[RMDB]
RNA sequence: GGGAACGACUCGAGUAGAGUCGAAAAAAACAACAGUAAGUUGCAGAGGUGGUGCAAGAAACAAGAUAGGCUACUUAUCAAGUGCUUCAAAGCCAUCACGUUUCUGACGGACAAGAUAAGCUGCUUCAUGAAUAACUCCUUUCGAGGAGUUAUUCAUAAAAGAAACAACAACAACAAC
Reactivity to 2A3 in 0.01 (KOAc 150mM, MgCl2 10mM, bicine 150mM(pH8.5), 24C), signal-to-noise 6, nucleotides 027 to 126: a000a000a000c130a040a010c040a040g040u130a150a020g000u070u030g010c010a000g020a010g080g030u070g000g030u050g040c040a040a030g030a060a030a000c040a090a080g010a050u090a070g000g000c040u060a020c020u130u110a120u220c060a150a060g040u040g130c080u150u120c060a090a040a000g000c010c010a010u010c010a000c070g000u010u030u010c020u000g040a060c030g020g020a010c030a030a060g030a130u130a070a020g030c020u030g000c000u050u040c020
Reactivity to DMS in 0.01 (KOAc 150mM, MgCl2 10mM, bicine 150mM(pH8.5), 24C), signal-to-noise 9, nucleotides 027 to 126: a050a040a070c080a050a070c110a100g020u010a080a080g000u010u000g000c050a050g000a090g000g020u000g010g010u000g010c090a060a030g000a020a000a010c010a130a200g000a030u010a070g020g000c030u010a060c050u000u010a090u030c200a030a120g020u010g020c150u030u020c150a050a090a080g010c010c010a040u000c040a080c290g000u000u000u000c020u010g000a080c090g000g000a060c110a070a080g010a090u020a070a120g010c030u000g000c010u000u010c100